The record gives the reactivity of an RNA of 177 nucleotides to 2A3 and DMS. For DMS, 14,868 sequencing reads were counted. The RNA was probed in 150 mM KOAc, 10 mM MgCl2 and 150 mM bicine (pH 8.5) at 24 C. 2A3 adducts were read by reverse transcription with SuperScript II with manganese. Source: RMDB library OK1LIB, as collected in RNAgym.
RNA sequence: GGGAACGACUCGAGUAGAGUCGAAAACAGGAUAAGUCCUUGUGAACAUUUUUAUCCGAUCUCUGAUGAGGACGAUUAGGACGAUACGUCGGCUGUUCACACGAAUCAUGAAUAAUGUUAGGCUGACAAUAUAGGUGCAGUUCGCUGCACCUAUAUUAAAAGAAACAACAACAACAAC
Reactivity to 2A3 in 0.01 (KOAc 150mM, MgCl2 10mM, bicine 150mM(pH8.5), 24C), signal-to-noise 8, nucleotides 027 to 126: c040a030g100g010a100u100a200a020g110u040c020c010u060u040g020u030g030a030a010c030a090u060u080u070u100u150a070u040c020c010g030a080u000c010u000c010u070g150a180u140g060a060g100g000a020c090g020a040u020u090a090g050g020a020c040g050a050u080a140c080g020u010c000g040g010c020u040g030u050u020c010a020c000a010c090g110a060a060u100c050a080u140g090a080a060u190a120a030u110g040u090u060a030g070g000c020u010g010a010c020
Reactivity to DMS in 0.01 (KOAc 150mM, MgCl2 10mM, bicine 150mM(pH8.5), 24C), signal-to-noise 6, nucleotides 027 to 126: c100a130g000g010a100u010a060a090g000u010c030c010u020u010g000u000g000a060a030c020a040u010u030u010u000u020a150u030c010c010g000a050u010c000u000c010u000g020a130u050g010a300g010g000a050c170g000a040u010u010a070g030g000a070c130g010a090u030a050c120g020u000c010g010g010c050u000g000u000u000c000a010c030a070c220g000a090a040u030c100a050u010g000a080a040u040a100a060u000g000u010u000a080g000g010c010u000g000a060c080